The record gives the reactivity of an RNA of 207 nucleotides to 2A3 and DMS. The RNA was probed in 150 mM KOAc, 10 mM MgCl2 and 150 mM bicine (pH 8.5) at 24 C.

RNA sequence: GGGAACGACUCGAGUAGAGUCGAAAACGUUAAACAGGUUCGCCUGUUUAACGAAAAAAGCGUACUACAAUCCAUGAACUACAAGGGUAUCCCAAAUAGGAUACGCUUGCAUGGAGUUGUAUCGCAAAAAACCUGGCUUACUUCGGUAAGCCAGGAACUAUGCAAUAUCGUUCGCGAUAUUGCAUAGAAAAGAAACAACAACAACAAC
Reactivity to 2A3 in 0.01 (KOAc 150mM, MgCl2 10mM, bicine 150mM(pH8.5), 24C), signal-to-noise 4, nucleotides 027 to 156: c000g000u000u010a000a000a000c010a010g000g050u070u090c210g120c090c010u010g000u000u000u010a000a030c000g050a040a000a000a000a000a010g030c030g030u090a060c040u010a000c040a060a040u010c000c000a030u010g020a110a050c090u110a050c300a030a020g080g070g010u000a010u020c030c020c030a200a300a120u250a120g000g010a010u020a000c080g090c230u000u000g010c000a000u000g000g020a010g000u000u010g000u000a020u300c140g000c000a040a100a000a030a000a000c000c000u000g000g020c000u010u000a000c000u010u030c110g110g000u000a000a000g000c000c000a000g000g000a000a000
Reactivity to DMS in 0.01 (KOAc 150mM, MgCl2 10mM, bicine 150mM(pH8.5), 24C), signal-to-noise 2, nucleotides 027 to 156: c020g010u000u000a000a010a000c000a010g020g020u000u000c300g010c000c000u000g010u000u000u000a000a000c010g030a010a050a040a150a090a160g000c010g000u000a080c060u000a020c000a010a040u000c020c000a140u000g020a110a230c040u000a150c020a000a030g020g010g040u000a010u000c000c000c040a080a120a170u000a050g020g000a010u000a000c000g020c010u000u000g000c000a030u010g010g000a060g010u010u000g010u000a020u000c000g040c020a000a000a040a070a050a090c010c000u010g010g010c000u000u000a020c010u010u000c300g050g020u000a010a000g010c000c000a000g000g000a010a020

DMS adducts were read by reverse transcription with MarathonRT. The data come from the RNA Mapping Database (RMDB), library RNAMAK. The DMS profile rests on 6,307 reads.